Chemical mapping of a 207-nucleotide RNA with DMS and 2A3. For 2A3 the reverse transcriptase was SuperScript II with manganese. For DMS, 2,941 sequencing reads were counted. As a SHAPE reagent, 2A3 marks flexible, mostly unpaired nucleotides at the ribose 2'-OH. The reactions ran in a buffer of 150 mM KOAc, 10 mM MgCl2 and 150 mM bicine (pH 8.5), at 24 C. DMS adducts were read by reverse transcription with MarathonRT.
RNA sequence: GGGAACGACUCGAGUAGAGUCGAAAACUACCCACUGUUCGAGGAUCUCCUCCCUCUCCUUCGAGGACGGGUUCGCGACGGGUUGGCUCAUCCUGAGAUCGGGGAGCCUCGACGAUCUCUUUGAUCUCCUGAAGGAGGAAGGAGCUCUCGAGCGCUCCUUACUGUACCUCUUCGGAGGUACAGUAAGAAAAGAAACAACAACAACAAC
Reactivity to DMS in 0.01 (KOAc 150mM, MgCl2 10mM, bicine 150mM(pH8.5), 24C), signal-to-noise 2, nucleotides 027 to 156: c040u000a300c000c000c030a150c210u000g020u000u000c000g000a040g000g000a060u000c020u060c010c000u010c090c000c030u020c050u000c080c070u030u010c060g010a060g050g020a050c050g020g010g020u000u000c060g000c020g000a240c060g000g050g020u010u000g000g030c040u000c030a080u000c010c040u030g020a160g040a090u000c080g030g020g020g000a030g010c120c020u000c090g000a030c040g020a050u000c010u000c020u010u010u000g020a110u000c000u000c010c060u000g030a160a110g010g040a070g050g030a050a030g000g020a030g020c090u010c050u020c030g010a030g020c080g020c060u000c030
Reactivity to 2A3 in 0.01 (KOAc 150mM, MgCl2 10mM, bicine 150mM(pH8.5), 24C), signal-to-noise 4, nucleotides 027 to 156: c090u190a130c000c010c040a050c150u180g000u000u000c000g010a020g060g110a200u060c010u030c020c000u040c050c020c000u180c020u030c020c010u020u010c040g200a010g010g010a020c030g010g000g030u040u090c020g010c010g140a140c080g110g140g000u060u160g040g010c010u010c030a250u180c080c010u130g050a110g000a220u240c100g010g000g020g030a000g000c000c000u020c030g080a080c010g010a030u010c060u030c000u160u300u240g110a140u050c060u000c050c050u070g000a010a000g000g010a000g020g000a000a010g000g000a000g000c020u020c000u000c030g010a010g000c020g020c040u050c000